[RMDB]
RNA sequence: GGGAACGACUCGAGUAGAGUCGAAAAGAAAGAAAGAACCCUUCCCGCGGGGCUGGAUCUUCCAGAUGGUGCGGGCCGGGACAAGCCGGAGAGUGUCCCGGUUUCAGAAACAACCUUCGGCAGCCAUACUAGACUACCCACUUCGGUGGGUAGUCAAUCGUAAUAGAAGGUUCGCCUUCUAUUACGAAAAAGAAACAACAACAACAAC
Reactivity to 2A3 in 0.01 (KOAc 150mM, MgCl2 10mM, bicine 150mM(pH8.5), 24C), signal-to-noise 1, nucleotides 027 to 156: g000a000a010a000g020a000a080a000g030a140a220c050c000c010u000u000c000c000c000g030c010g010g000g000g020c000u010g000g010a110u120c090u190u010c100c010a000g010a010u010g010g120u030g000c000g000g010g000c010c000g000g000g000a000c000a000a000g000c000c000g020g010a000g000a000g000u000g000u000c000c000c000g000g000u000u020u020c010a000g000a010a020a000c050a020a010c000c000u000u010c000g020g000c000a050g040c050c040a070u120a210c070u080a090g000a010c000u000a000c000c020c000a010c030u020u030c090g050g000u000g000g000g010u000a000g000u000c000a000a000
An RNA of 207 nucleotides, treated with 2A3 and read out base by base. The data come from the RNA Mapping Database (RMDB), library M2RFPK. For 2A3, 1,117 sequencing reads were counted. The RNA was probed in 150 mM KOAc, 10 mM MgCl2 and 150 mM bicine (pH 8.5) at 24 C.